Background: Structure probing data (2A3 and DMS) for a 207-nucleotide construct. The RNA was probed in 150 mM KOAc, 10 mM MgCl2 and 150 mM bicine (pH 8.5) at 24 C. Source: RMDB library RNAMAK, as collected in RNAgym.

[RMDB]
RNA sequence: GGGAACGACUCGAGUAGAGUCGAAAAGAACACCUUCGGGUGUUCCAGCGGCGUACUACCAUUUAAGGCGCCAGGCCGAGCAUGGUCCCAAAUAGGACCAUGUAUCCUGGAACUACGCUGUGCGAUGGUAUCGCAGUACUAGCUUUUCGAAGCUAAAGUUAAUUGGCUAUUUCGAUAGCCAAUUAACAAAAGAAACAACAACAACAAC
Reactivity to 2A3 in 0.01 (KOAc 150mM, MgCl2 10mM, bicine 150mM(pH8.5), 24C), signal-to-noise 4, nucleotides 027 to 156: g010a000a000c010a000c010c000u030u110c270g130g000g000u000g000u010u010c010c000a050g060c040g090g000c020g020u060a060c040u010a020c010c010a020u060u090u050a120a060g000g000c000g000c000c000a000g000g000c060c080g140a080g030c000a010u010g000g000u030c000c010c020a220a300a070u300a110g000g000a000c000c000a000u000g000u010a070u010c000c020u010g010g010a090a060c090u160a060c190g010c000u040g050u090g090c050g010a010u000g000g050u060a090u300c000g000c000a010g010u030a040c060u020a000g000c000u030u060u040u170c210g150a050a010g000c020u040a140a050a010
Reactivity to DMS in 0.01 (KOAc 150mM, MgCl2 10mM, bicine 150mM(pH8.5), 24C), signal-to-noise 2, nucleotides 027 to 156: g010a040a000c000a010c000c000u000u010c300g050g020g050u000g010u010u010c000c040a080g020c070g000g000c030g080u000a040c150u000a080c000c000a030u000u000u020a190a250g010g000c000g000c000c100a090g000g000c010c010g000a190g010c010a030u000g010g030u010c010c010c030a080a150a280u010a060g000g020a010c010c000a020u000g020u000a050u000c030c010u000g020g010a060a100c000u020a050c000g000c000u000g010u000g000c290g000a030u010g020g010u000a300u000c030g040c010a100g000u010a080c140u000a030g000c010u010u000u010u010c220g000a080a070g010c010u000a010a080a220
Description
The DMS profile rests on 3,447 reads.